[RMDB]
RNA sequence: GGGAACGACUCGAGUAGAGUCGAAAACGAGGCCGAGGGGGGCCUGGAGCUGCUGGACGCGCUGAUUGACAAGUAUCGCCAGCAGCUGCUCAGCACCGACUUUCGCGCCGGCUGCCCGAUCGCCGCGUGGGAUGGUGUCGUUCGCGACACCAUCCCAAAAAGAAACAACAACAACAAC
Reactivity to 2A3 in 0.01 (KOAc 150mM, MgCl2 10mM, bicine 150mM(pH8.5), 24C), signal-to-noise 1, nucleotides 027 to 126: c010g000a040g000g000c020c020g050a070g000g050g000g000g000g000c000c000u000g000g000a000g000c000u000g020c000u000g050g050a110c000g040c030g000c070u010g120a280u300u050g100a060c080a090a000g100u000a130u210c000g000c000c000a000g040c000a000g000c000u000g010c010u010c000a010g050c000a000c020c020g180a210c110u170u230u030c020g030c020g000c000c000g000g000c000u050g090c000c000c040g000a130u060c030g030c050c050g000c000g000